[RMDB]
RNA sequence: GGGAACGACUCGAGUAGAGUCGAAAAGAUCGGCAACAUGGACAACAGCAUCGUCGAGGAGAACGGCAACUCGUCGGCGGCAUCGGGCUCCAAUGACGUGGUCGAUGUCGUUGCCCAACAGGCGGCGGAAGACAUGUAUGUUCGCAUACAUGUCUUCAAAAGAAACAACAACAACAAC
Reactivity to DMS in 0.01 (KOAc 150mM, MgCl2 10mM, bicine 150mM(pH8.5), 24C), signal-to-noise 6, nucleotides 027 to 126: g000a040u000c030g010g010c010a070a070c060a110u010g010g000a040c050a080a110c070a110g000c060a070u000c040g010u000c030g010a110g000g010a050g010a060a090c080g000g010c110a070a080c050u010c020g020u010c000g010g010c050g010g020c070a040u010c050g020g000g010c070u010c020c050a050a140u000g010a090c120g020u000g000g020u000c010g000a010u010g010u000c020g000u000u000g000c030c020c030a080a130c170a140g000g000c020g010g020c100g000
Reactivity to 2A3 in 0.01 (KOAc 150mM, MgCl2 10mM, bicine 150mM(pH8.5), 24C), signal-to-noise 5, nucleotides 027 to 126: g040a060u050c020g020g000c010a030a010c010a100u080g040g030a030c020a140a010c020a090g050c010a050u080c040g040u010c000g010a030g030g030a030g030a120a040c050g150g020c020a040a060c020u010c020g220u010c020g080g010c010g010g000c000a030u050c030g020g050g020c030u010c010c030a040a150u190g060a070c130g040u030g000g140u030c010g010a020u050g010u020c000g010u000u030g110c010c000c000a030a030c030a010g070g000c030g000g000c030g050